[RMDB]
RNA sequence: GGGAACGACUCGAGUAGAGUCGAAAAGUAGGUCCAAGGAAGCGUCGGCGGUAAGCAAAACUGCCUCAAGCAGGCCAUCAAUGUUAAUGUUUUGCUUUGCAGAAAUAUCCACGAACAUGGUGUCGCCGAGAUACGUGAGGUUCGCCUCACGUAUCUCAAAAGAAACAACAACAACAAC
Reactivity to 2A3 in 0.01 (KOAc 150mM, MgCl2 10mM, bicine 150mM(pH8.5), 24C), signal-to-noise 3, nucleotides 027 to 126: g060u070a030g050g050u040c020c040a010a010g100g020a010a070g040c060g060u050c010g030g000c000g030g070u060a000a000g030c010a010a000a010a000c030u040g000c010c030u020c000a100a100g010c070a000g030g000c040c030a100u120c060a090a150u200g000u190u220a120a070u120g010u000u030u040u020g000c000u080u090u080g030c040a030g040a040a120a030u110a040u110c030c010a030c060g070a060a020c050a080u070g100g050u060g040u090c040g000c050c010
Reactivity to DMS in 0.01 (KOAc 150mM, MgCl2 10mM, bicine 150mM(pH8.5), 24C), signal-to-noise 3, nucleotides 027 to 126: g000u000a130g010g010u010c010c050a110a120g000g010a100a080g020c040g010u000c040g010g010c000g010g000u010a020a030g000c020a030a010a040a090c010u010g010c000c050u010c060a050a170g040c130a040g000g000c030c090a080u020c190a140a120u000g000u010u010a100a050u010g010u000u000u010u000g010c010u000u000u020g030c070a100g020a040a020a030u010a100u000c070c020a080c100g000a070a040c170a040u000g000g020u000g020u000c040g070c090c090
Notes
Structure probing data (2A3 and DMS) for a 177-nucleotide construct. The reactions ran in a buffer of 150 mM KOAc, 10 mM MgCl2 and 150 mM bicine (pH 8.5), at 24 C. Reactivities are given for positions 27 through 126. For DMS the reverse transcriptase was MarathonRT. High DMS reactivity at an A or C suggests that its Watson-Crick edge is free.